[RMDB]
Notes: Chemical mapping of a 177-nucleotide RNA with DMS and 2A3.

RNA sequence: GGGAACGACUCGAGUAGAGUCGAAAACCAACUUAUGACAGAACAUCACUGGAGAGUAAUCUGUUGCUCUUACGGUGUUUAUAGCGCGCCAUUUGACGGAUGGUUUAUACUUGGCCCGGUAUUGUCGGGGUUUAAGGUGUUUCGACACCUUAAACCCAAAAGAAACAACAACAACAAC
Reactivity to DMS in 0.01 (KOAc 150mM, MgCl2 10mM, bicine 150mM(pH8.5), 24C), signal-to-noise 1, nucleotides 027 to 126: c000c000a060a180c300u020u050a060u050g000a080c120a130g000a160a020c070a020u000c000a040c040u000g000g000a000g010a000g000u000a090a020u050c230u000g010u000u000g000c000u000c000u010u000a090c060g000g000u000g000u020u000u040a080u020a000g000c070g000c230g010c040c000a040u000u010u000g020a080c060g060g020a040u000g000g000u000u000u030a040u050a090c120u000u020g000g000c000c060c040g040g000u000a110u000u000g020u000c070g000
Reactivity to 2A3 in 0.01 (KOAc 150mM, MgCl2 10mM, bicine 150mM(pH8.5), 24C), signal-to-noise 3, nucleotides 027 to 126: c000c000a010a080c080u140u170a140u260g070a010c030a040g100a150a010c020a070u100c020a010c060u050g070g020a030g000a000g010u060a020a140u130c070u170g260u130u040g030c000u000c000u000u120a160c000g000g000u010g010u000u040u010a130u050a000g100c050g000c000g010c010c000a020u010u010u080g080a040c040g080g010a060u060g060g080u070u090u110a160u050a060c000u040u040g020g000c000c100c000g050g040u030a050u040u040g080u060c010g060
Overview: Values cover nucleotides 27 to 126. The data come from the RNA Mapping Database (RMDB), libraries RFM100 and RFMREP. 2A3 adducts were read by reverse transcription with SuperScript II with manganese. The RNA was probed in 150 mM KOAc, 10 mM MgCl2 and 150 mM bicine (pH 8.5) at 24 C. The DMS profile rests on 1,247 reads.